[RMDB]
RNA sequence: GGGAACGACUCGAGUAGAGUCGAAAAGCGGAUGGGCCACAUCGAGCUUGCCGCGCCCGUCACCCACAUCUGGUACUUCAAGGGUGUGCCCUCGCGGCUGGGGUAUCUGCUGGACCUGGCCCCGAAGCCACGGGAUGAAAUUCGUUUCAUCCCGUGGAAAAGAAACAACAACAACAAC
Reactivity to DMS in 0.01 (KOAc 150mM, MgCl2 10mM, bicine 150mM(pH8.5), 24C), signal-to-noise 3, nucleotides 027 to 126: g030c040g010g010a080u020g010g000g020c010c030a110c150a120u010c060g010a090g000c000u000u000g000c010c000g000c020g010c070c000c020g010u000c080a060c060c070c000a090c110a070u000c040u000g000g010u010a050c150u000u000c120a090a120g000g010g020u000g010u000g010c050c020c040u000c040g050c290g020g000c000u010g000g010g000g010u000a030u000c070u000g010c080u010g000g000a080c050c080u000g000g020c000c010c020c000g000a110a120g010
Reactivity to 2A3 in 0.01 (KOAc 150mM, MgCl2 10mM, bicine 150mM(pH8.5), 24C), signal-to-noise 2, nucleotides 027 to 126: g020c020g040g050a230u080g060g040g040c030c020a070c040a260u160c140g060a040g060c030u010u040g020c000c010g070c000g010c030c000c000g040u060c030a060c010c040c000a040c000a110u030c080u090g090g040u150a190c080u080u150c060a140a140g020g010g040u030g020u040g050c010c010c010u010c010g030c020g050g000c020u040g000g020g000g030u060a100u050c070u150g070c070u110g030g030a050c010c010u000g030g000c000c010c020c010g040a030a010g000

Conditions: 150 mM KOAc, 10 mM MgCl2 and 150 mM bicine (pH 8.5), 24 C. The record gives the reactivity of an RNA of 177 nucleotides to DMS and 2A3. Source: RMDB library OK2TRN, as collected in RNAgym. DMS adducts were read by reverse transcription with MarathonRT.